[RMDB]
RNA sequence: GGGAACGACUCGAGUAGAGUCGAAAAGCGCGAAGCGGUGUAGCGUCACUUUGAUGGCGGUACUAUGAAUUGAUGCAAGGUGUGGUGCGACCUUAAACAGUUCUGGUGGUGCUCUGAAUGGAGUGCUUGAGGCCUCGCCGAUUCGUCGGCGAGGCAAGGUCAAUUAUUCGUUCGCGAAUAAUUGACCAAAAGAAACAACAACAACAAC
Reactivity to 2A3 in 0.01 (KOAc 150mM, MgCl2 10mM, bicine 150mM(pH8.5), 24C), signal-to-noise 3, nucleotides 027 to 156: g100c100g000c040g040a070a030g050c030g010g000u080g010u060a030g050c010g040u020c010a020c100u180u210u180g200a240u060g060g000c020g000g060u020a010c050u060a070u130g080a090a090u100u110g070a050u080g070c080a020a040g010g020u040g020u030g020g020u000g030c030g020a080c010c000u070u140a080a040a030c020a030g010u050u060c020u090g030g020u050g000g030u020g010c000u000c000u080g080a060a080u140g020g000a010g040u030g010c000u010u060g060a050g000g090c000c000u020c000g010c010c020g000a020u010u030c150g050u000c020g060g000c000g000a000g000g000c010a000a000